[RMDB]
RNA sequence: GGGAACGACUCGAGUAGAGUCGAAAAUAGCGAUCUCUAAUGAGAUCGCGAGUCGAGUCCAUCGUAGAGGCUCAAACGAUGAGCGAAAACGCGACUACAGGAGUCGAGGAAAACUCGACUCCAAAAACGCACCAUCCAGUUUCGACUGGAUGGUGCGAAAAGAAACAACAACAACAAC
Reactivity to 2A3 in 0.01 (KOAc 150mM, MgCl2 10mM, bicine 150mM(pH8.5), 24C), signal-to-noise 1, nucleotides 027 to 126: u100a000g060c000g000a000u070c000u040c000u170a300a300u300g000a000g000a000u000c000g000c000g000a020g020u010c030g000a000g000u000c030c120a090u090c060g000u000a030g000a110g270g000c020u050c000a000a000a060c070g080a200u110g030a000g050c000g270a000a080a000a000c000g000c060g110a130c000u040a050c140a130g000g010a000g000u000c000g040a030g000g030a090a000a160a160c000u000c000g000a000c000u000c000c000a010a020a020a020a020